[RMDB]
RNA sequence: GGGAACGACUCGAGUAGAGUCGAAAAGUGGAUCACAAGGUCAGGAGGUCGAGAGCAUCCUGGCCAACAUGGUGAAAUGCCAUCUCUACUAAAAAUACAAAAAUUAGCUGCAUAUGGUGGCAUGUGCGCGUCUUGUGGCAUUCGUGCCACAAGACGCAAAAGAAACAACAACAACAAC
Reactivity to 2A3 in 0.01 (KOAc 150mM, MgCl2 10mM, bicine 150mM(pH8.5), 24C), signal-to-noise 1, nucleotides 027 to 126: g000u020g010g030a000u050c010a000c060a120a030g020g000u040c000a010g020g010a000g000g000u130c060g070a020g000a020g160c000a010u010c000c000u000g010g000c000c000a010a000c030a040u070g070g000u020g000a000a100a060u040g030c000c020a040u020c010u020c000u020a050c040u200a190a040a030a000a050u250a150c110a070a070a000a050a000u150u060a070g030c060u060g000c000a010u010a050u180g000g010u020g000g000c000a040u030g010u070g010c070
An RNA of 177 nucleotides, treated with 2A3 and read out base by base.